Conditions: 150 mM KOAc, 10 mM MgCl2 and 150 mM bicine (pH 8.5), 24 C. An RNA of 177 nucleotides, treated with DMS and 2A3 and read out base by base. For 2A3, 24,558 sequencing reads were counted. For DMS the reverse transcriptase was MarathonRT.
RNA sequence: GGGAACGACUCGAGUAGAGUCGAAAAACACGAGUCAGCUCAGACUUGUGCGAGUACGGAUUCUGCAAUCCGUGCAGAGUCUAGUCUACGCUGACUGGACUAGUAAGUGAUUGCAGAAUCACUUGCAAUACCAGCUAGUAUUCGUACUAGCUGGUAUAAAAGAAACAACAACAACAAC
Reactivity to DMS in 0.01 (KOAc 150mM, MgCl2 10mM, bicine 150mM(pH8.5), 24C), signal-to-noise 9, nucleotides 027 to 126: a090c030a050c020g010a010g010u000c000a140g010c180u010c260a130g010a020c010u000u000g010u000g010c020g000a100g020u000a120c170g010g010a010u000u000c030u010g000c040a030a020u000c010c020g010u000g010c050a110g010a100g010u000c000u000a010g010u000c000u000a140c300g010c230u010g010a010c010u000g000g000a020c020u000a070g000u000a180a060g010u010g000a000u000u000g000c070a030g000a020a010u000c000a010c020u000u000g010c080a150
Reactivity to 2A3 in 0.01 (KOAc 150mM, MgCl2 10mM, bicine 150mM(pH8.5), 24C), signal-to-noise 8, nucleotides 027 to 126: a000c020a000c020g010a010g010u010c010a040g040c130u070c170a040g010a020c000u020u030g020u030g030c030g010a010g020u050a060c110g100g000a000u010u010c000u030g010c010a000a010u000c010c030g020u050g010c030a070g020a000g250u000c000u010a000g000u000c010u050a090c250g060c280u040g000a000c000u000g000g000a000c010u010a030g040u050a210a060g020u050g240a000u000u000g000c000a000g010a010a000u010c000a000c000u000u030g010c020a030